[RMDB]
RNA sequence: GGGAACGACUCGAGUAGAGUCGAAAAUAUUAGUUAACACUCACACACUCCUGUGGGCCAGACACUAAUCCCAGUGUAUGAUGUGUAUUAAUUUAUUUAAUUCACAAGUUGGCUGUAUGACGUAAAAUGUGUAAUGAUCCAUUUUGGCCAUGGGGAAUAAUCAGCGCAUAUUCGUAUGCGCUGAUUAAAAAGAAACAACAACAACAAC
Reactivity to DMS in 0.01 (KOAc 150mM, MgCl2 10mM, bicine 150mM(pH8.5), 24C), signal-to-noise 1, nucleotides 027 to 156: u000a040u000u000a010g020u000u010a160a190c160a040c030u010c020a020c000a020c030a080c140u000c080c060u000g040u010g000g010g000c040c030a230g000a190c170a060c030u000a080a060u000c000c010c020a260g030u000g000u000a060u010g010a090u000g030u000g000u000a020u000u000a020a040u000u000u000a190u020u010u000a070a020u000u000c000a050c020a000a190g010u000u000g020g010c000u010g000u000a120u000g000a030c070g000u010a070a020a060a060u000g020u030g040u000a230a160u000g000a130u000c110c040a000u000u000u000u000g020g030c010c020a010u000g030g000g030g000a110a190
Reactivity to 2A3 in 0.01 (KOAc 150mM, MgCl2 10mM, bicine 150mM(pH8.5), 24C), signal-to-noise 1, nucleotides 027 to 156: u200a050u160u120a020g080u060u150a040a120c020a020c030u060c000a060c000a010c000a010c030u070c010c000u000g000u020g060g020g010c000c010a010g010a020c000a000c060u010a050a040u000c010c000c000a000g020u020g040u030a130u030g020a060u110g010u000g000u030a050u030u050a030a010u020u070u130a150u070u160u030a100a080u140u110c010a010c050a060a050g080u050u060g070g000c020u030g000u200a120u070g140a000c040g030u040a020a010a120a140u110g050u020g010u130a080a040u080g050a010u000c040c120a040u000u020u000u110g030g030c010c000a040u050g020g000g000g020a000a020

An RNA of 207 nucleotides, treated with DMS and 2A3 and read out base by base. For DMS, 2,281 sequencing reads were counted. DMS adducts were read by reverse transcription with MarathonRT.